This 177-nucleotide RNA was probed chemically with 2A3.
It was measured as part of the RMDB library OK1LIB.
As a SHAPE reagent, 2A3 marks flexible, mostly unpaired nucleotides at the ribose 2'-OH.
The RNA was probed in 150 mM KOAc, 10 mM MgCl2 and 150 mM bicine (pH 8.5) at 24 C.

[RMDB]
RNA sequence: GGGAACGACUCGAGUAGAGUCGAAAAACUAUUUGUUCUAUAGCAAAUAAACCCGAAACACAGGAUAUAUUUGUUAUAUAUGCUUUGUGGAACACAGCUGUUAGGACUUGAGCCAUCAGGGUCCAAAGGACGCAGCAUAUUUCGAUAUGCUGCGUCCAAAAGAAACAACAACAACAAC
Reactivity to 2A3 in 0.01 (KOAc 150mM, MgCl2 10mM, bicine 150mM(pH8.5), 24C), signal-to-noise 1, nucleotides 027 to 126: a010c030u050a100u000u000u070g090u020u000c050u070a200u160a020g020c000a000a000a040u000a000a040a010c000c000c030g050a070a040a000c060a000c000a010g020g020a000u020a020u000a030u070u180u080g100u110u040a030u000a000u000a000u050g150c000u030u000u000g000u100g070g050a090a000c080a000c060a200g130c030u160g000u180u110a020g010g010a000c030u060u240g040a000g060c010c000a070u000c000a000g040g020g230u000c000c000a000a040a060